[RMDB]
RNA sequence: GGGAACGACUCGAGUAGAGUCGAAAAAAAUUGCUCUGUUAAGUGUUCUUCUUUAGGGUAAUUGGAAUUAAUGUAGAAAGUAGUACAAGUUAGGAUAAUUUAGUCAUGAACUAUAUGAGAAGAACUGAUUGUAAUUACCCUUCGGGGUAAUUACAAUAAAAGAAACAACAACAACAAC
Reactivity to DMS in 0.01 (KOAc 150mM, MgCl2 10mM, bicine 150mM(pH8.5), 24C), signal-to-noise 1, nucleotides 027 to 126: a080a080a050u010u000g000c000u010c030u000g000u000u000a120a100g000u000g000u000u000c020u010u010c000u000u000u000a050g030g000g010u000a000a000u000u000g000g000a150a090u010u000a060a080u010g000u010a050g020a120a080a130g010u010a060g010u000a050c060a010a050g000u000u000a030g030g000a160u010a060a050u000u000u000a050g010u000c040a050u000g000a120a070c020u000a050u000a070u000g000a030g010a010a010g010a020a010c040u000g000

The data come from the RNA Mapping Database (RMDB), library OK2TRN. Chemical mapping of a 177-nucleotide RNA with DMS. For DMS the reverse transcriptase was MarathonRT. The reactions ran in a buffer of 150 mM KOAc, 10 mM MgCl2 and 150 mM bicine (pH 8.5), at 24 C.